[RMDB]
An RNA of 207 nucleotides, treated with 2A3 and read out base by base.
For 2A3 the reverse transcriptase was SuperScript II with manganese.
Source: RMDB library M2RFPK, as collected in RNAgym.
The reactions ran in a buffer of 150 mM KOAc, 10 mM MgCl2 and 150 mM bicine (pH 8.5), at 24 C.

RNA sequence: GGGAACGACUCGAGUAGAGUCGAAAAACGAGGUACGCCUCGAAAAUAUGACCGGUGUCAAAGCCUCUAGCACACAGAGGUCGCGUGGGUUCAACUCCCCCCCUUUUCCGAGGGUAUCGGAAACCAAAAAACACAAUUUGGUUCGCCAAAUUGUGAAGAACUGAAGGUACUUCGGUACCUUCAGUUCAAAAGAAACAACAACAACAAC
Reactivity to 2A3 in 0.01 (KOAc 150mM, MgCl2 10mM, bicine 150mM(pH8.5), 24C), signal-to-noise 1, nucleotides 027 to 156: a000c010g000a020g000g000u030a030c140g070c010c000u000c000g020a100a040a010a010u150a100u110g020a030c000c020g040g000u090g040u130c090a070a080a030g000c000c000u000c000u060a070g090c070a070c000a000c000a160g060a000g040g000u000c000g030c030g040u150g040g000g000u110u160c050a110a120c050u100c020c000c000c000c000c000c040u000u110u000u000c000c000g000a010g000g000g000u080a010u010c000g000g000a020a000a000c020c010a000a050a130a080a060a000c010a000c000a010a000u000u000u000g040g000u010u020c100g010c020c000a010a000a000u000u010g000u000g020a010a000